The record gives the reactivity of an RNA of 207 nucleotides to 2A3. It was measured as part of the RMDB library OK3TST. For 2A3 the reverse transcriptase was SuperScript II with manganese. The reactions ran in a buffer of 150 mM KOAc, 10 mM MgCl2 and 150 mM bicine (pH 8.5), at 24 C. For 2A3, 535 sequencing reads were counted.

RNA sequence: GGGAACGACUCGAGUAGAGUCGAAAAGGGCCUUCCGCGACCUCUCCACUCAAGGCGAAACCGUUCCAUUUUGAGUGAGUAUAUAUCGGGUGCCACACGCGCAAACGCAUGCAAUAAACCCACUCCCGUAUGAGUUACCCCGGCAUUAAUAUCGCGGGUCCGAUAUCCUAUUCGUAGGAUAUCGGACAAAAGAAACAACAACAACAAC
Reactivity to 2A3 in 0.01 (KOAc 150mM, MgCl2 10mM, bicine 150mM(pH8.5), 24C), signal-to-noise 1, nucleotides 027 to 156: g070g000g020c040c000u070u030c010c020g030c020g040a060c000c000u050c010u050c110c070a010c000u010c000a000a050g060g000c060g130a200a050a030c100c010g020u070u110c010c050a090u150u020u000u130g020a020g000u010g030a050g030u030a090u020a020u000a000u160c040g010g020g010u010g030c070c030a130c030a020c110g070c000g040c090a030a030a030c080g050c010a040u070g000c040a010a120u090a230a160a120c000c020c000a040c040u070c000c000c010g030u120a150u120g060a070g080u070u070a060c010c010c010c010g030g000c010a010u060u210a150a080u050a010u040c010g000c030g040g000